The record gives the reactivity of an RNA of 207 nucleotides to 2A3 and DMS.
For DMS the reverse transcriptase was MarathonRT.
The RNA was probed in 150 mM KOAc, 10 mM MgCl2 and 150 mM bicine (pH 8.5) at 24 C.

RNA sequence: GGGAACGACUCGAGUAGAGUCGAAAACCUGGUUUAGGGUUGCAGGCUAGCCCUAUCUAUCGGUCGAGAUGCGAGCGCUUAAGCUCAAAUUGAGUGGCUGAGUUAGUGGUGAACGUAUCCCUAUGUUAAAACGGUAGCUGCUUCGGCAGCUACCGAAGGAUUAAGGUACGUUCGCGUACCUUAAUCCAAAAGAAACAACAACAACAAC
Reactivity to 2A3 in 0.01 (KOAc 150mM, MgCl2 10mM, bicine 150mM(pH8.5), 24C), signal-to-noise 2, nucleotides 027 to 156: c010c010u050g100g070u060u050u070a030g010g000g010u030u060g020c040a070g070g090c050u030a000g000c020c000c010u000a000u030c010u050a100u030c000g020g010u000c050g030a030g010a070u010g000c000g000a010g000c030g030c160u250u290a060a090g000c000u010c000a020a010a020u010u010g030a000g040u170g040g010c020u030g010a000g020u000u010a070g000u120g280g010u050g040a080a010c020g000u020a020u100c000c000c000u010a020u070g140u080u190a050a090a030a030c000g000g010u000a000g000c000u000g010c000u030u080c080g150g000c000a000g000c000u000a010c000c000g000a000a010
Reactivity to DMS in 0.01 (KOAc 150mM, MgCl2 10mM, bicine 150mM(pH8.5), 24C), signal-to-noise 1, nucleotides 027 to 156: c020c000u050g020g060u000u000u000a020g020g000g000u010u000g010c020a110g030g040c080u000a160g000c020c000c000u010a000u000c030u010a140u000c030g020g050u000c010g030a300g000a070u020g000c300g020a010g030c000g000c110u000u000a100a210g040c000u000c010a050a180a030u000u020g020a220g000u020g000g070c060u020g000a140g020u000u000a020g010u000g050g010u000g020a100a100c020g000u000a050u000c020c000c020u000a210u000g050u000u010a020a030a030a200c000g020g000u000a040g030c020u000g020c030u010u000c230g070g030c040a000g000c000u000a010c000c000g010a000a060